[RMDB]
The record gives the reactivity of an RNA of 207 nucleotides to DMS and 2A3. For DMS the reverse transcriptase was MarathonRT. The 2A3 profile rests on 473 reads.

RNA sequence: GGGAACGACUCGAGUAGAGUCGAAAAAAUGGCACCACUUACAUUAAGGCUUGGGUGGUUGAACGCGCAAAUGUUGCUUAUGAAGCUCAGAAUGUGACUGCUAUCAAUGGCAUUACAUAUUGCGCUAAAAUCCCUCAUACUUUGCCUGACGGGAGUGCCUUAGCGCCACAUUCGUGUGGCGCUAAGGAAAAGAAACAACAACAACAAC
Reactivity to DMS in 0.01 (KOAc 150mM, MgCl2 10mM, bicine 150mM(pH8.5), 24C), signal-to-noise 1, nucleotides 027 to 156: a080a060u000g000g010c000a020c000c010a010c020u010u000a070c070a110u010u000a050a030g040g000c020u000u000g000g000g020u010g010g010u000u010g030a040a150c290g000c000g040c000a030a060a040u000g000u000u000g000c020u000u000a240u000g000a180a040g000c010u030c020a110g000a150a130u050g040u030g020a050c140u000g020c010u000a040u010c050a040a300u000g010g040c010a060u000u000a100c010a000u000a140u000u000g000c000g000c010u000a010a040a070a040u000c000c000c000u000c030a110u000a110c110u000u000u000g030c000c040u010g000a110c180g020g040g000a060g020u000g010
Reactivity to 2A3 in 0.01 (KOAc 150mM, MgCl2 10mM, bicine 150mM(pH8.5), 24C), signal-to-noise 2, nucleotides 027 to 156: a000a010u210g050g020c030a040c030c000a050c050u090u090a080c010a050u050u170a040a000g040g000c000u080u020g000g010g010u050g000g070u030u020g060a120a050c070g020c000g040c020a000a010a010u000g000u000u000g000c000u070u040a080u160g000a000a000g040c000u010c150a160g200a250a150u230g160u100g120a120c130u190g000c000u150a220u300c050a060a080u120g010g010c000a000u000u280a040c000a010u080a210u150u020g030c000g000c000u000a000a000a000a000u050c070c010c000u000c030a080u080a130c100u110u090u240g010c000c020u010g070a000c080g030g000g030a020g000u010g000